[RMDB]
RNA sequence: GGGAACGACUCGAGUAGAGUCGAAAAUUUAUUGUCGGUGAUACCGGUCAGGUUUAUCUAACCGGGUUGGCAGACAGCGGCCAAUUAAUUGUGAAAUGGGGCUAUGACACUUCGCAGCAGUGCCAUGGCACGAUAAACUAUUCGUAGUUUAUCGUGCAAAAGAAACAACAACAACAAC
Reactivity to DMS in 0.01 (KOAc 150mM, MgCl2 10mM, bicine 150mM(pH8.5), 24C), signal-to-noise 6, nucleotides 027 to 126: u010u010u010a050u010u010g020u000c020g010g020u000g010a100u010a100c010c000g000g010u000c040a030g010g010u010u010u010a090u020c060u010a060a030c000c000g010g000g010u000u000g010g030c030a060g010a070c060a050g010c110g000g010c030c050a040a060u010u010a060a080u000u000g010u000g010a060a060a060u000g010g020g000g010c070u010a030u000g010a050c030a020c030u000u000c080g000c080a070g000c120a040g010u000g010c000c030a060u000g000
Reactivity to 2A3 in 0.01 (KOAc 150mM, MgCl2 10mM, bicine 150mM(pH8.5), 24C), signal-to-noise 4, nucleotides 027 to 126: u040u070u040a100u050u070g050u020c020g010g040u040g020a040u050a210c000c000g010g000u010c020a040g060g060u130u210u190a110u140c040u020a020a010c000c000g000g000g020u030u050g030g010c010a020g020a100c020a010g060c020g070g000c020c020a010a010u110u090a060a070u100u080g060u020g110a040a060a100u100g010g000g000g030c040u050a040u080g010a020c010a010c060u050u090c060g010c050a050g000c010a010g040u010g040c020c020a050u070g060
The record gives the reactivity of an RNA of 177 nucleotides to DMS and 2A3. High 2A3 reactivity points to a flexible backbone, as in loops and unpaired stretches. For 2A3, 7,226 sequencing reads were counted. For DMS the reverse transcriptase was MarathonRT. Source: RMDB library OK2TRN, as collected in RNAgym.